[RMDB]
RNA sequence: GGGAACGACUCGAGUAGAGUCGAAAAUGGGGCACUUUUUAUGUGAACUUCUGCAGGUUAUGCUCGGCGCUCAAGAGUUGUAUCGACCGGGUAGUUUCCAACUCCGGCUUGUGUUAAGAAGGAGCCGCUAGGAAUGAUACUUCGGUAUCAUUCCUAGAAAAGAAACAACAACAACAAC
Reactivity to DMS in 0.01 (KOAc 150mM, MgCl2 10mM, bicine 150mM(pH8.5), 24C), signal-to-noise 2, nucleotides 027 to 126: u000g020g010g000g010c040a040c040u010u000u010u010u000a060u040g010u000g010a070a070c040u000u000c050u000g000c030a040g000g030u000u000a050u010g020c040u000c020g000g000c050g000c050u010c040a070a120g010a090g010u010u000g020u000a130u000c020g010a110c040c020g010g000g010u000a040g000u000u000u000c010c010a090a230c070u010c050c000g020g000c010u000u000g020u010g020u010u010a030a080g010a090a050g010g000a050g010c090c060g020
Reactivity to 2A3 in 0.01 (KOAc 150mM, MgCl2 10mM, bicine 150mM(pH8.5), 24C), signal-to-noise 1, nucleotides 027 to 126: u190g000g010g000g010c080a060c000u160u150u060u100u180a130u180g060u060g020a160a040c040u130u100c000u130g000c050a020g140g050u140u100a050u060g000c000u000c040g060g000c050g000c010u000c060a070a050g050a070g000u150u140g030u040a250u070c040g070a130c000c000g000g000g000u000a010g010u000u030u100c000c030a030a070c000u000c070c000g050g000c040u130u030g150u010g030u260u150a240a130g030a030a000g210g000a030g030c020c020g070